Background: This 177-nucleotide RNA was probed chemically with DMS and 2A3. For DMS, 7,618 sequencing reads were counted. The RNA was probed in 150 mM KOAc, 10 mM MgCl2 and 150 mM bicine (pH 8.5) at 24 C. 2A3 adducts were read by reverse transcription with SuperScript II with manganese. For 2A3, 4,378 sequencing reads were counted.
RNA sequence: GGGAACGACUCGAGUAGAGUCGAAAAGGCGGCGGCCUUGCUUAUGGUGCCUUGCAUGAGUUUGCCGGUGGUGGAUCGGGCACCGUCGAUGGCGCGGCCGCUGCUCUUUUUGCGGCUGGCAUAGCGGCCGCGGGAGGCUAUUCGUAGCCUCCCGCGGAAAAGAAACAACAACAACAAC
Reactivity to DMS in 0.01 (KOAc 150mM, MgCl2 10mM, bicine 150mM(pH8.5), 24C), signal-to-noise 3, nucleotides 027 to 126: g000g000c000g020g000c000g000g000c000c010u010u020g000c010u010u000a040u050g000g020u000g000c020c000u000u020g060c210a070u050g000a100g040u020u020u020g000c010c030g000g040u050g010g050u020g000g000a050u020c040g000g020g010c010a010c000c000g010u010c300g030a070u030g000g000c000g010c300g000g000c000c000g000c000u000g010c000u020c000u000u000u000u010u020g000c020g000g010c000u000g000g030c060a100u030a190g000c020g010g020
Reactivity to 2A3 in 0.01 (KOAc 150mM, MgCl2 10mM, bicine 150mM(pH8.5), 24C), signal-to-noise 5, nucleotides 027 to 126: g010g000c000g000g010c000g010g000c000c000u020u050g010c010u110u050a080u300g010g000u020g010c000c020u100u130g070c070a160u180g040a070g200u130u200u170g080c050c050g130g120u230g060g040u100g050g050a090u100c040g010g010g000c000a000c010c000g030u070c030g100a110u160g020g010c010g010c000g030g000c000c000g010c000u000g000c000u020c010u020u020u000u020u020g050c030g020g000c030u060g040g060c070a070u080a070g050c020g020g030